Structure probing data (DMS) for a 177-nucleotide construct. The data come from the RNA Mapping Database (RMDB), library M2PK90.
[RMDB]
RNA sequence: GGGAACGACUCGAGUAGAGUCGAAAAAUUUUUAACGCGUGUGUACUCUCUAUCACGAAUUACGCAGUUAUUUUCGACUUUACUCGAGUCGUUAUAGCGUGAUAUGAGAGAGUUAUCCGCGAACCAACACGAACCUAUAAUUCGUUAUAGGUUCGUGAAAAGAAACAACAACAACAAC
Reactivity to DMS in 0.01 (KOAc 150mM, MgCl2 10mM, bicine 150mM(pH8.5), 24C), signal-to-noise 2, nucleotides 027 to 126: a090u010u010u010u010u000a030a040c050g010c010g020u020g000u010g020u000a030c020u000c010u000c000u020a100u020c050a020c050g000a210a130u010u010a050c130g000c080a180g000u000u000a050u010u000u000u000c000g000a010c000u000u000u000a010c010u000c030g000a000g000u000c000g010u000u000a040u000a140g000c000g000u010g000a020u000a020u000g010a030g020a030g000a060g000u000u000a050u000c010c010g000c010g010a080a130c020c040a100a150
For DMS the reverse transcriptase was MarathonRT. The RNA was probed in 150 mM KOAc, 10 mM MgCl2 and 150 mM bicine (pH 8.5) at 24 C. The DMS profile rests on 1,530 reads.